[RMDB]
RNA sequence: GGGAACGACUCGAGUAGAGUCGAAAAUGCUGAGCUUUCGAGCUCAGCAGAGGCAAGCAAGCAGCGCAACGAGACAAGACGAGCAUAAGUUCGAGCAUGCUACAAUACGGCACUUCGGUGCCGUAAAGAGUUACCAGACAUUCGUGUCUGGUAACUCAAAAGAAACAACAACAACAAC
Reactivity to DMS in 0.01 (KOAc 150mM, MgCl2 10mM, bicine 150mM(pH8.5), 24C), signal-to-noise 2, nucleotides 027 to 126: u000g010c000u000g010a000g000c000u000u000u000c170g010a020g020c000u000c000a000g000c010a020g000a090g000g040c010a150a100g000c070a050a060g000c010a040g000c070g000c040a040a030c030g000a110g010a090c050a050a050g010a080c080g000a070g000c020a010u010a050a120g000u000u020c090g010a140g020c100a010u000g000c050u020a050c130a090a140u020a000c000g000g000c000a010c000u000u020c180g030g010u000g000c000c000g000u000a000a000a040
Reactivity to 2A3 in 0.01 (KOAc 150mM, MgCl2 10mM, bicine 150mM(pH8.5), 24C), signal-to-noise 2, nucleotides 027 to 126: u050g000c000u010g000a000g000c000u060u010u300c300g110a000g000c000u000c000a000g000c000a000g000a000g020g000c040a000a110g020c020a080a030g000c020a010g010c000g000c030a050a050c020g030a010g020a060c040a080a000g040a040c060g060a000g000c010a060u070a300a040g020u050u040c030g000a000g060c030a020u050g020c000u050a060c010a060a050u030a040c000g000g000c000a000c000u030u070c160g070g000u000g000c000c000g000u040a000a000a030